[RMDB]
RNA sequence: GGGAACGACUCGAGUAGAGUCGAAAAAAGGGCCCAGAGGGGAAUGAGCCUCGUCGUCGACGAAGGGGUGCAUUCCGAAGAGCUGGCCUGGCGUCGUCCGGCUCCCUCGACCGCACCGGAGCGCUAGCGAAAUAAACCGGUUCGCCGGUUUAUUUCGAAAAGAAACAACAACAACAAC
Reactivity to 2A3 in 0.01 (KOAc 150mM, MgCl2 10mM, bicine 150mM(pH8.5), 24C), signal-to-noise 1, nucleotides 027 to 126: a000a000g060g030g000c170c190c020a020g030a040g100g260g010g000a000a020u030g000a000g000c010c020u000c000g050u000c000g060u080c150g080a300c040g010a040a000g030g030g000g030u050g000c010a000u000u060c010c010g000a100a010g050a030g040c030u040g000g000c000c000u000g030g000c020g000u100c030g100u000c000c020g000g000c040u020c040c000c020u070c020g090a090c050c110g040c070a050c020c020g020g010a000g030c000g000c050u040a040g130
Reactivity to DMS in 0.01 (KOAc 150mM, MgCl2 10mM, bicine 150mM(pH8.5), 24C), signal-to-noise 3, nucleotides 027 to 126: a110a050g010g000g010c070c030c090a050g000a100g000g000g010g030a010a030u000g010a270g000c000c000u000c000g010u000c020g020u010c260g010a100c050g000a020a040g010g010g000g020u000g000c000a020u000u000c000c000g030a100a120g010a120g020c020u010g020g000c020c000u000g010g010c020g010u010c110g000u000c010c030g000g000c200u000c020c020c000u000c150g010a070c160c110g020c150a140c020c010g000g000a080g010c000g000c020u000a120g010